[RMDB]
RNA sequence: GGGAACGACUCGAGUAGAGUCGAAAAGACCGCAGAAGCGGAAACGGCGAAAACGUACGGAAGAAUACGCACGAGCGGAAGACUGGAUAGCGACCGAGAGGUCGCCACGCCGAAUUAUCCAGAAGAACACCCGGAUAUGGUUCGCCAUAUCCGGGUGAAAAGAAACAACAACAACAAC
Reactivity to DMS in 0.01 (KOAc 150mM, MgCl2 10mM, bicine 150mM(pH8.5), 24C), signal-to-noise 2, nucleotides 027 to 126: g010a120c120c030g000c030a220g010a300a170g020c040g010g000a090a060a210c010g000g000c000g010a290a110a000a050c060g010u010a040c010g060g000a120a100g040a130a020u020a220c040g020c000a040c020g090a140g000c040g000g020a090a080g000a150c040u010g000g000a010u000a020g020c020g000a000c030c010g020a280g000a240g000g010u000c000g000c000c080a020c030g060c020c020g040a060a040u000u000a000u000c030c000a000g000a110a130g000a170a120
Reactivity to 2A3 in 0.01 (KOAc 150mM, MgCl2 10mM, bicine 150mM(pH8.5), 24C), signal-to-noise 2, nucleotides 027 to 126: g050a030c000c000g020c000a050g030a300a020g000c030g040g000a040a060a010c030g060g000c030g000a070a190a080a050c030g060u260a100c000g010g030a010a010g060a180a060u140a040c020g000c090a010c090g110a010g010c040g000g010a000a010g140a080c000u020g020g030a000u000a000g000c000g000a000c000c000g050a020g010a000g090g000u000c000g000c000c000a010c070g050c080c010g030a000a000u090u010a000u000c010c010a000g030a050a050g010a170a040
The record gives the reactivity of an RNA of 177 nucleotides to DMS and 2A3. 2A3 adducts were read by reverse transcription with SuperScript II with manganese. Reactivities are rounded to 0.1 and cut off at 0 and 3.